[RMDB]
The record gives the reactivity of an RNA of 177 nucleotides to 2A3.
2A3 adducts were read by reverse transcription with SuperScript II with manganese.
The data come from the RNA Mapping Database (RMDB), library OK1LIB.
The RNA was probed in 150 mM KOAc, 10 mM MgCl2 and 150 mM bicine (pH 8.5) at 24 C.
RNA sequence: GGGAACGACUCGAGUAGAGUCGAAAAUAUGGGUUCCUGGUCAACAUAGAACAGAUGCGAAAGACGGUUAUGUCCGGGGACGGUCUCUAUCGUUAAAACAAAUUAAUCCCUAUGGAUCGACAGCGCCCACCGCGGCUUGAUUCGUCAAGCCGCGGUGAAAAGAAACAACAACAACAAC
Reactivity to 2A3 in 0.01 (KOAc 150mM, MgCl2 10mM, bicine 150mM(pH8.5), 24C), signal-to-noise 1, nucleotides 027 to 126: u300a110u070g110g000g000u000u000c000c000u080g070g070u000c130a120a070c000a010u050a000g080a070a040c040a110g150a070u000g040c050g100a110a070a000g100a070c010g000g060u000u030a110u290g100u010c000c090g000g040g000g010a010c000g130g000u050c060u050c040u090a020u150c000g010u090u170a000a180a000a000c050a010a010a000u030u000a050a040u100c020c000c000u110a160u100g000g000a070u120c060g020a000c000a000g030c000g030c000c000
For 2A3, 385 sequencing reads were counted. Reactivities are given for positions 27 through 126.